[RMDB]
RNA sequence: GGGAACGACUCGAGUAGAGUCGAAAAGAUAUGGAGACGUUGUGAGACAUGCUGGGCAGGGUCGGAAACGACCCGAUGCAGCAACAGCUCACACCGUCUCCUAAGUCAAAGUUGGGUUCGCCCAACAGCUCACUAUUAGGUUCGCCUAAUAGUGAGCAAAAGAAACAACAACAACAAC
Reactivity to 2A3 in 0.01 (KOAc 150mM, MgCl2 10mM, bicine 150mM(pH8.5), 24C), signal-to-noise 3, nucleotides 027 to 126: g030a010u090a030u140g020g000a020g000a000c030g000u010u000g000u020g020a030g020a070c080a210u080g010c010u040g000g300g100c110a050g020g000g000u010c000g030g020a120a060a020c020g000a010c000c000c020g010a020u050g070c000a000g020c000a020a010c040a000g070c000u000c000a000c000a000c020c000g000u000c010u010c000c000u000a000a010g000u020c030a100a040a000g000u000u010g020g030g010u060u130c300g140c030c030c010a010a020c000a000
Reactivity to DMS in 0.01 (KOAc 150mM, MgCl2 10mM, bicine 150mM(pH8.5), 24C), signal-to-noise 4, nucleotides 027 to 126: g000a080u000a300u000g000g000a020g020a020c000g000u000u000g010u010g030a020g000a080c120a180u010g020c000u000g020g020g000c170a300g000g020g040u010c000g000g020a080a050a300c000g000a010c000c010c000g000a030u030g010c010a010g020c000a020a080c300a130g020c010u000c000a010c000a000c050c000g000u000c010u000c000c000u010a010a070g010u010c040a120a090a080g000u000u000g010g010g000u000u000c270g010c010c000c000a020a000c040a090
Source information:
An RNA of 177 nucleotides, treated with 2A3 and DMS and read out base by base. For DMS, 3,557 sequencing reads were counted. The 2A3 profile rests on 8,439 reads. The data come from the RNA Mapping Database (RMDB), library TTRDES. Reactivities are rounded to 0.1 and cut off at 0 and 3.